RNA sequence: GGGAACGACUCGAGUAGAGUCGAAAAGUCAUGGUGCAGACCGACGGGCGCUUUGGCACCCAGUCCCAGGCCACGGUGAACUUGGGGGUCGUGAGCAGGUUCCGGGUGGUCGGCGCCGUGGCCCGGGCGGUAGAGUUAGUUUCGACUAACUCUACCGAAAAGAAACAACAACAACAAC
Reactivity to DMS in 0.01 (KOAc 150mM, MgCl2 10mM, bicine 150mM(pH8.5), 24C), signal-to-noise 3, nucleotides 027 to 126: g000u000c010a020u010g010g020u010g010c010a080g010a100c040c020g010a050c030g010g000g010c030g020c010u000u010u020g000g000c020a120c000c010c010a110g000u010c000c000c000a110g000g000c030c020a020c010g010g000u000g010a060a020c040u020u010g010g000g000g000g010u000c020g010u020g010a080g020c090a130g010g000u020u000c020c000g000g000g030u000g010g000u000c040g010g010c020g000c000c000g010u000g010g010c000c000c020g000g000g020
Reactivity to 2A3 in 0.01 (KOAc 150mM, MgCl2 10mM, bicine 150mM(pH8.5), 24C), signal-to-noise 8, nucleotides 027 to 126: g020u010c010a030u040g020g000u020g010c020a030g060a150c030c060g050a060c070g050g050g000c020g010c010u070u080u060g020g000c020a050c010c000c010a020g070u050c000c000c000a010g050g000c010c000a020c020g010g000u060g040a130a050c030u100u150g080g010g000g000g010u040c040g070u090g070a090g050c090a070g050g030u080u030c010c000g020g010g050u070g020g040u070c030g000g020c030g000c010c000g000u000g000g000c000c000c000g000g020g000